The record gives the reactivity of an RNA of 177 nucleotides to DMS and 2A3. For 2A3 the reverse transcriptase was SuperScript II with manganese. Values cover nucleotides 27 to 126.
[RMDB]
RNA sequence: GGGAACGACUCGAGUAGAGUCGAAAACUUAUUUUAAGCAUAAUCGUUUUACACUCUCAACUCCCACUAACAAACGUGUUAUGUUUAUUUUCCUUAAAAACACGGUCUUUUUUGGGUUAAGGUCACACACGUCUCAUGUUUUCGAACAUGAGACGUGAAAAGAAACAACAACAACAAC
Reactivity to DMS in 0.01 (KOAc 150mM, MgCl2 10mM, bicine 150mM(pH8.5), 24C), signal-to-noise 2, nucleotides 027 to 126: c130u020u000a040u000u000u010u010a000a060g050c030a020u010a030a030u000c030g000u000u020u000u000a140c150a090c150u000c060u000c060a060a120c160u000c050c020c000a070c140u000a040a050c240a000a040a010c000g020u050g000u000u000a040u000g000u000u000u000a010u010u010u000u000c020c020u010u040a000a030a100a050a120c100a100c090g000g050u000c010u000u000u000u000u000u000g000g030g020u000u000a030a060g020g000u000c050a090c130a190
Reactivity to 2A3 in 0.01 (KOAc 150mM, MgCl2 10mM, bicine 150mM(pH8.5), 24C), signal-to-noise 1, nucleotides 027 to 126: c010u140u090a130u110u150u000u090a010a020g000c000a000u020a020a000u050c020g040u000u020u060u050a080c090a020c020u170c000u040c050a130a150c120u040c010c000c000a040c060u110a160a030c080a120a070a000c000g050u080g000u120u080a090u040g040u070u040u010a080u060u040u030u070c000c000u080u080a200a160a000a030a010c080a010c020g040g150u110c000u000u100u030u020u110u000g070g000g000u040u000a040a030g060g000u060c060a020c020a010
Conditions: 150 mM KOAc, 10 mM MgCl2 and 150 mM bicine (pH 8.5), 24 C.